[RMDB]
RNA sequence: GGGAACGACUCGAGUAGAGUCGAAAACAGGUCGAUAGUACCAAUAACCCUGGUACCAAUAAGGUACUAUCGACCAUUUAGCUCUUCUUCUACAACACGCUCGCUGAAGAAGAGCCUUUCGGGUACCAGGGAAGCGAGCGCAAGGCCGAGAGGCCGAGCUCGAGGACUAGUUCGCUAGUCCUCGAGCAAAAGAAACAACAACAACAAC
Reactivity to 2A3 in 0.01 (KOAc 150mM, MgCl2 10mM, bicine 150mM(pH8.5), 24C), signal-to-noise 1, nucleotides 027 to 156: c010a020g010g010u000c000g010a040u010a000g010u010a000c010c030a030a120u200a240a200c030c000c000u020g000g000u020a050c030c090a120a080u210a300a120g000g000u000a000c000u000a000u000c000g000a020c000c000a000u070u030u050a000g000c000u010c000u000u000c000u040u010c000u050a040c000a300a020c050a110c190g000c010u010c010g020c020u050g010a000a000g030a000a000g000a000g010c000c000u130u160u210c050g050g030g000u000a000c000c000a020g000g000g000a000a020g000c000g010a010g000c010g020c050a100a150g000g000c000c000g060a060g010a050g100g020c010c020g000a040